[RMDB]
RNA sequence: GGGAACGACUCGAGUAGAGUCGAAAAGAAGCGGCGAAAAAUGCGUGUAAAUAAAAGGUCAAUAUGACCUGACAGUGAUACCAAUUUAAAUGGGUCGAAGUCUCGCCAAAAUACGCAACAAAUAGAAGAAAAUUGUAAAAUUCGUUUUACAAUUUUCAAAAGAAACAACAACAACAAC
Reactivity to DMS in 0.01 (KOAc 150mM, MgCl2 10mM, bicine 150mM(pH8.5), 24C), signal-to-noise 2, nucleotides 027 to 126: g000a140a090g030c130g000g020c010g000a020a040a090a060a080u010g010c020g010u000g000u000a080a090a050u010a030a060a120a040g010g000u000c000a160a140u030a110u010g030a010c000c010u010g000a030c010a050g000u040g000a010u000a050c000c030a020a060u000u000u010a080a100a120u000g000g000g000u000c010g000a160a190g000u000c030u000c010g030c020c020a030a070a080a060u000a040c030g000c040a060a100c110a080a100a070u010a080g010a080a160
Reactivity to 2A3 in 0.01 (KOAc 150mM, MgCl2 10mM, bicine 150mM(pH8.5), 24C), signal-to-noise 1, nucleotides 027 to 126: g100a020a020g110c100g070g010c010g070a000a110a000a000a000u090g010c020g000u020g020u040a080a150a080u170a010a160a050a050g010g000u030c010a100a140u150a140u300g000a010c000c000u000g000a000c020a000g000u040g140a000u110a300c010c010a000a010u090u090u280a090a240a120u040g000g000g030u000c000g010a040a010g050u000c010u030c010g000c010c000a010a010a000a160u050a010c010g000c000a040a000c010a020a200a080u220a020g080a230a000